This 177-nucleotide RNA was probed chemically with 2A3 and DMS. Conditions: 150 mM KOAc, 10 mM MgCl2 and 150 mM bicine (pH 8.5), 24 C. The DMS profile rests on 7,065 reads. For 2A3 the reverse transcriptase was SuperScript II with manganese. The data come from the RNA Mapping Database (RMDB), library M2PK50. In probing experiments dimethyl sulfate is read out at A N1 and C N3, which are open when not base-paired.

RNA sequence: GGGAACGACUCGAGUAGAGUCGAAAAGGAAAACAGUUCGCUGUUUUCCAAAUAAAUGGUAUGAUGUGCACGGCUAGCACAUAGAACCAGAAAGAGGCGAAAAAAGCUUUCCCUUCGGGGAAAGCAAGGAUUAUAGGAAGUUCGCUUCCUAUAAUCCAAAAGAAACAACAACAACAAC
Reactivity to 2A3 in 0.01 (KOAc 150mM, MgCl2 10mM, bicine 150mM(pH8.5), 24C), signal-to-noise 3, nucleotides 027 to 126: g000g010a000a000a000a010c010a000g020u060u070c140g030c110u000g010u020u010u010u000c010c000a030a010a000u040a000a050a040u040g010g010u040a050u250g080a010u010g030u010g010c030a010c120g230g020c180u120a050g000c020a000c000a010u010a010g040a010a030c010c000a000g070a010a090a000g130a030g040g060c060g080a020a030a000a010a040a080g000c000u000u000u000c020c000c000u000u030c250g010g010g000g000a000a000a010g000c000a010a000
Reactivity to DMS in 0.01 (KOAc 150mM, MgCl2 10mM, bicine 150mM(pH8.5), 24C), signal-to-noise 5, nucleotides 027 to 126: g010g000a030a010a000a010c010a010g010u000u020c210g040c010u010g000u000u010u010u000c000c000a050a060a050u010a060a070a100u010g010g020u000a050u010g000a010u000g010u000g000c010a090c180g030g020c200u010a100g000c000a000c010a020u000a050g010a090a030c000c000a050g010a060a080a090g000a060g010g020c050g000a000a050a080a080a090a090g000c000u000u000u000c000c000c000u010u010c170g030g000g010g000a010a000a010g000c000a010a020